[RMDB]
RNA sequence: GGGAACGACUCGAGUAGAGUCGAAAAAGGUGGAUCACCUGAGGUCGGGAGUUCGAGUCCAGCCUGACCAACGUGGAGAAACCCUAUCUCUACUAAAAAUACAAAAUUAGCUGGGCAUGGUGGUGCAUCUAAUAUUUCCUUUCGAGGAAAUAUUAGAAAAAGAAACAACAACAACAAC
Reactivity to DMS in 0.01 (KOAc 150mM, MgCl2 10mM, bicine 150mM(pH8.5), 24C), signal-to-noise 5, nucleotides 027 to 126: a070g010g020u000g010g000a150u000c030a030c030c050u000g000a130g010g010u000c020g010g000g010a070g000u000u000c070g020a090g010u000c030c040a050g000c000c020u010g000a040c030c030a050a090c160g010u000g000g000a060g010a060a070a070c030c020c020u000a080u000c010u000c010u010a020c010u020a000a030a030a060a070u010a100c130a060a030a060a080u010u000a070g010c040u000g000g000g010c040a070u000g000g020u000g010g010u000g010c070a100
Reactivity to 2A3 in 0.01 (KOAc 150mM, MgCl2 10mM, bicine 150mM(pH8.5), 24C), signal-to-noise 3, nucleotides 027 to 126: a010g040g010u040g030g050a110u120c030a030c040c030u050g020a050g030g030u010c010g010g020g010a080g040u150u150c090g040a010g030u030c020c020a010g050c010c010u010g000a000c000c020a030a020c040g010u030g000g000a030g010a050a070a040c010c010c010u030a050u050c000u020c000u000a040c010u070a080a110a110a050a050u180a080c070a040a150a030a160u160u090a070g010c030u030g000g000g020c040a040u040g020g010u030g010g010u010g000c000a020